[RMDB]
RNA sequence: GGGAACGACUCGAGUAGAGUCGAAAAGAAAAUCCCGGUCCCGUCAGACAAAUCAGUGACAUGAUGGUCAUUGCGAAAGCACACGCACGAAAUGUCACUGAUGAAAAAGUGCGUGUGACCAAAAAAACUGUUGAAUUACGUUCGCGUAAUUCAACAGAAAAGAAACAACAACAACAAC
Reactivity to DMS in 0.01 (KOAc 150mM, MgCl2 10mM, bicine 150mM(pH8.5), 24C), signal-to-noise 1, nucleotides 027 to 126: g010a110a110a160a050u000c000c000c030g000g010u000c000c010c050g020u000c110a070g010a120c250a050a100a020u000c000a010g010u010g020a030c020a040u020g000a100u000g000g000u010c090a090u010u010g010c030g000a060a110a110g010c010a160c090a030c080g000c020a050c010g000a070a100a020u000g010u000c020a010c000u000g010a010u010g000a050a020a070a040a060g000u010g010c000g000u000g000u010g000a000c000c000a000a020a060a020a020a010a160
Structure probing data (DMS) for a 177-nucleotide construct. For DMS the reverse transcriptase was MarathonRT. It was measured as part of the RMDB library M2PK90.